[RMDB]
RNA sequence: GGGAACGACUCGAGUAGAGUCGAAAAAGUCCGGUCUGAAGUGUCCCGGCUAUAAUAAAUCGAUCUUUGCGGGCAGCCCGUUGGCAGGAGGCGCGAGGAAUCCGUCUCUCUGUCUGGUGCGGCAAGGUAGUCCUGGGUCCCUUUGGGGCUCCACCUUAGCCAUAUAUAACUUCGGUUAUAUAUGGCUAAAAGAAACAACAACAACAAC
Reactivity to 2A3 in 0.01 (KOAc 150mM, MgCl2 10mM, bicine 150mM(pH8.5), 24C), signal-to-noise 2, nucleotides 027 to 156: a010g060u030c030c020g020g050u040c040u070g120a130a080g060u070g060u160c000c030c000g000g000c020u060a030u050a240a100u120a040a140a080u250c060g030a030u020c040u090u040u040g020c080g040g080g040c040a040g030c020c010c060g100u180u070g000g000c000a000g000g000a000g020g060c030g010c170g030a050g050g130a120a150u020c020c000g000u010c000u000c000u010c010u010g020u040c040u050g060g000u090g020c010g010g000c010a000a000g040g000u030a020g020u080c060c030u040g010g000g000u030c000c000c000u170u110u130g000g000g000g050c010u000c010c020a100c000c040u000u000